[RMDB]
RNA sequence: GGGAACGACUCGAGUAGAGUCGAAAAUCGGAUUGAGAGCCAUAUCCUCUUCUAAUACUCUAAUAACACCAGUUUGUGGUUGAUACAAAUCCAUAAUUAACCUUAUUAUUGUGGUUUUACCAGCGCCAACCACACUUCUUUUCGAAGAAGUGUGGUUAAAAGAAACAACAACAACAAC
Reactivity to DMS in 0.01 (KOAc 150mM, MgCl2 10mM, bicine 150mM(pH8.5), 24C), signal-to-noise 3, nucleotides 027 to 126: u010c090g010g010a100u000u000g010a080g010a100g010c050c040a060u010a090u000c030c000u000c040u000u000c050u000a070a080u010a090c040u000c020u010a080a090u000a060a090c080a070c050c060a080g000u000u000u010g020u010g000g010u000u000g010a060u010a070c220a030a050a030u010c010c010a010u010a010a040u010u010a070a110c170c100u010u000a070u000u000a050u000u010g010u000g010g010u000u000u010u000a090c050c030a050g010c060g000c070c080
Reactivity to 2A3 in 0.01 (KOAc 150mM, MgCl2 10mM, bicine 150mM(pH8.5), 24C), signal-to-noise 2, nucleotides 027 to 126: u120c020g040g040a030u070u080g100a050g010a020g130c030c010a020u050a070u080c000c010u070c010u140u000c010u050a080a050u070a190c050u010c000u050a040a110u100a120a070c030a050c030c000a040g020u040u060u090g110u070g040g010u000u060g020a030u040a070c060a020a090a000u000c010c000a030u020a050a050u090u110a080a070c020c090u130u130a100u210u040a030u050u120g040u020g020g080u030u050u070u060a030c030c020a030g000c050g000c040c000